RNA sequence: GGGAACGACUCGAGUAGAGUCGAAAAACUUUAAAGGGAGGCACAUAUAUGCGGAGUGGUCUUGCAACACGUUUAGUCAUCAUUUUUAACAGUUUCUGUUCAAAAUUCGCGUAGAUCACGCGUAGAUCCCGUCAGGUACUUUCGAGUACCUGACGGGAAAAGAAACAACAACAACAAC
Reactivity to 2A3 in 0.01 (KOAc 150mM, MgCl2 10mM, bicine 150mM(pH8.5), 24C), signal-to-noise 1, nucleotides 027 to 126: a000c210u200u240u120a100a040a000g000g000g000a040g000g000c240a060c000a030u250a040u100a040u190g030c000g040g000a110g000u150g000g000u000c000u000u110g090c030a040a000c030a010c030g060u150u150u150a080g090u000c000a000u000c000a110u100u050u090u000u140a010a000c000a100g010u010u150u150c140u000g190u270u210c110a000a210a000a000u180u130c130g000c000g050u000a110g000a140u130c000a000c040g000c000g000u000a000g000a180u010